[RMDB]
RNA sequence: GGGAACGACUCGAGUAGAGUCGAAAACUUGGGGCCAGCUCACCCAUGCCCACACCAGUAGGGCCAGUUCUAUUGUUCUGCCCAGGCAGGAUGCAGGGCCCUCUCUCUAGAAUGCUAGUGAGGGGCAGCAGAUGAUAACGUUCGCGUUAUCAUCUGCAAAAGAAACAACAACAACAAC
Reactivity to 2A3 in 0.01 (KOAc 150mM, MgCl2 10mM, bicine 150mM(pH8.5), 24C), signal-to-noise 1, nucleotides 027 to 126: c000u020u020g040g010g020g000c050c100a040g010c020u020c010a070c030c010c010a030u050g000c000c010c010a010c010a020c000c070a100g090u080a100g040g000g010c000c000a020g020u050u050c090u110a250u210u300g030u050u050c000u070g010c010c000c000a010g100g000c030a020g000g130a050u080g020c030a020g000g060g110c080c060c010u020c000u000c000u000c000u000a170g040a300a150u220g220c000u010a000g020u000g010a010g010g000g030g000c000a020
Reactivity to DMS in 0.01 (KOAc 150mM, MgCl2 10mM, bicine 150mM(pH8.5), 24C), signal-to-noise 1, nucleotides 027 to 126: c040u000u000g020g000g020g000c030c040a110g000c040u000c080a150c030c000c000a040u000g000c000c020c020a180c090a090c120c090a050g030u010a060g000g000g000c030c040a060g020u000u000c090u010a110u000u030g000u000u000c000u000g010c060c040c070a130g010g000c050a040g000g000a100u000g020c120a080g010g010g000c030c000c000u000c010u000c050u000c030u000a020g000a220a150u000g010c010u010a000g000u000g000a070g000g000g020g000c060a090
Chemical mapping of a 177-nucleotide RNA with 2A3 and DMS. The RNA was probed in 150 mM KOAc, 10 mM MgCl2 and 150 mM bicine (pH 8.5) at 24 C. It was measured as part of the RMDB library OK2TRN. 2A3 adducts were read by reverse transcription with SuperScript II with manganese. Values cover nucleotides 27 to 126.